[RMDB]
RNA sequence: GGGAACGACUCGAGUAGAGUCGAAAAUGUGUGUUUAAUUCAGAAGUUAAUGGUGCAUCAGAAGCCGCAAAAGCUUGCUGGUCAUGCAACAUAUUUACCGUGAAUGCACCACCAAUAACCGCCGUAGCAUGAGCAUCGUUUUCGAACGAUGCUCAUGAAAAGAAACAACAACAACAAC
Reactivity to DMS in 0.01 (KOAc 150mM, MgCl2 10mM, bicine 150mM(pH8.5), 24C), signal-to-noise 2, nucleotides 027 to 126: u030g040u010g010u000g000u000u000u000a070a110u000u000c000a080g010a170a120g010u000u010a050a050u000g000g000u000g010c010a030u010c020a030g000a060a010g010c000c060g010c300a050a070a140a170g010c040u000u000g000c010u000g010g010u010c300a070u000g000c020a030a030c020a020u000a010u020u010u010a070c080c060g010u000g000a020a010u000g020c080a070c120c010a050c040c030a050a060u010a160a170c050c050g030c070c100g010u000a130g010
Reactivity to 2A3 in 0.01 (KOAc 150mM, MgCl2 10mM, bicine 150mM(pH8.5), 24C), signal-to-noise 2, nucleotides 027 to 126: u030g100u000g000u000g030u020u080u150a060a050u050u040c080a040g040a280a010g200u040u090a070a020u040g020g030u000g000c000a000u030c000a040g010a020a000g010c020c070g080c200a000a120a110a080g000c010u040u220g160c000u020g050g060u060c020a000u030g000c010a000a010c000a020u110a110u090u110u040a040c000c040g030u030g020a020a000u060g000c010a010c050c000a030c030c010a030a050u090a090a080c030c010g130c030c080g060u060a020g080